[RMDB]
RNA sequence: GGGAACGACUCGAGUAGAGUCGAAAAUACUAUUAAUGCUCUACCAGAAACUUCUGCCGAUAUUCUGGUGGUUGAUGAGGUUAGUAUGUGCACUAAUUAUGAUCUUUCAAUUAUUAAUGCACGUAUUCAAACCGAGGAUUCGUCCUCGGUAAAAGAAACAACAACAACAAC
Reactivity to DMS in 0.01 (KOAc 150mM, MgCl2 10mM, bicine 150mM(pH8.5), 24C), signal-to-noise 9, nucleotides 027 to 129: u070a090c080u040a040u080u000a110a100u090g030c050u000c040u020a010c020c020a040g020a010a030a110c180u030u020c050u050g060c250c180g010a070u020a120u040u010c030u000g000g020u020g010g020u070u010g040a020u020g000a090g030g010u000u000a050g020u000a000u070g020u010g020c010a020c060u010a030a020u000u000a100u000g000a020u060c140u030u090u050c020a080a110u040u030a040u000u000a000a000u000g000c010a000c000g030u020a050u030u040c130a030a100
Reactivity to 2A3 in 0.01 (KOAc 150mM, MgCl2 10mM, bicine 150mM(pH8.5), 24C), signal-to-noise 9, nucleotides 027 to 129: u120a010c070u060a050u230u110a140a070u220g030c020u000c000u020a000c000c000a020g040a050a170a200c060u090u030c060u160g210c060c080g040a040u010a100u120u020c020u030g000g020u040g020g010u150u040g060a140u090g050a020g080g040u060u050a000g010u000a010u030g000u000g010c000a000c000u000a010a010u010u070a010u030g080a060u080c160u080u300u100c120a120a090u030u010a000u000u010a040a000u000g000c000a000c010g010u020a040u040u080c080a110a050
Chemical mapping of a 170-nucleotide RNA with DMS and 2A3. For DMS, 39,942 sequencing reads were counted. The reactions ran in a buffer of 150 mM KOAc, 10 mM MgCl2 and 150 mM bicine (pH 8.5), at 24 C. For DMS the reverse transcriptase was MarathonRT.